[RMDB]
RNA sequence: GGGAACGACUCGAGUAGAGUCGAAAAACAUCGAGGCUAAAGGAAGAAGAGAGAGAGUACAGCCUUAGUUCAGAUCACAUAUGACUAUCUUUUGCGAGUCUGAUCGAUACUCUGAUGAAGGCUGUACCAAUUAACAGAAAUUCGUUUCUGUUAAUUGAAAAGAAACAACAACAACAAC
Reactivity to 2A3 in 0.01 (KOAc 150mM, MgCl2 10mM, bicine 150mM(pH8.5), 24C), signal-to-noise 9, nucleotides 027 to 126: a000c040a070u110c060g040a030g050g000c060u090a080a040a040g050g020a030a070g030a080a010g050a020g010a000g010a000g010a010g020u000a000c000a000g000c000c000u040u040a050g040u050u020c010a000g000a020u050c040a020c030a110u170a050u180g010a010c010u040a080u240c070u080u280u180u260g100c140g020a010g010u000c010u040g040a050u090c020g000a010u030a110c050u020c010u050g010a020u050g040a010a000g000g000c000u000g000u000a000c000
Reactivity to DMS in 0.01 (KOAc 150mM, MgCl2 10mM, bicine 150mM(pH8.5), 24C), signal-to-noise 9, nucleotides 027 to 126: a100c100a070u010c060g010a080g010g010c050u010a050a090a070g000g010a050a050g010a050a040g000a070g010a080g010a090g000a130g010u000a000c000a010g000c000c000u000u000a090g010u010u000c020a020g000a030u000c080a090c180a080u020a070u020g000a030c040u000a070u020c050u010u010u020u020g010c150g000a030g000u000c010u000g000a070u020c120g000a090u020a080c220u010c030u000g010a030u070g000a030a030g000g010c000u000g000u000a000c020
Structure probing data (2A3 and DMS) for a 177-nucleotide construct. For DMS the reverse transcriptase was MarathonRT. Source: RMDB libraries RFM100 and RFMREP, as collected in RNAgym. The reactions ran in a buffer of 150 mM KOAc, 10 mM MgCl2 and 150 mM bicine (pH 8.5), at 24 C. For 2A3 the reverse transcriptase was SuperScript II with manganese.